Conditions: 150 mM KOAc, 10 mM MgCl2 and 150 mM bicine (pH 8.5), 24 C. The record gives the reactivity of an RNA of 207 nucleotides to 2A3. Reactivities are given for positions 27 through 156. It was measured as part of the RMDB library M2RFPK.

RNA sequence: GGGAACGACUCGAGUAGAGUCGAAAAGUGAAAGCUCCUUCUCUCGCAAUGUGUAACUCAUGAUUCCCAUGACCCCUGGUUGGAGAGAUCCGGACUAGGAGCCAGGGGGCCUCUGAUUCUGCCAGCCAAAACUGUCGUAAGUUCGCUUACGACAGAACAGUCCCAUAUCGUUCGCGAUAUGGGACUGAAAAGAAACAACAACAACAAC
Reactivity to 2A3 in 0.01 (KOAc 150mM, MgCl2 10mM, bicine 150mM(pH8.5), 24C), signal-to-noise 1, nucleotides 027 to 156: g020u030g020a050a070a040g000c030u010c030c020u100u000c050u020c010u000c010g010c090a040a100u100g050u020g050u180a120a040c030u050c030a070u050g010a150u090u070c030c000c020a010u130g150a220c010c010c000c000u010g020g020u000u150g070g000a060g000a020g050a010u000c090c070g080g050a050c010u150a100g020g070a010g000c000c030a000g000g010g000g000g010c010c010u000c010u030g030a170u100u040c020u090g050c070c050a050g000c090c050a000a000a000a190c000u000g010u000c010g000u000a000a030g000u020u060c120g020c120u000u000a000c010g000a010c000a000g000a000a010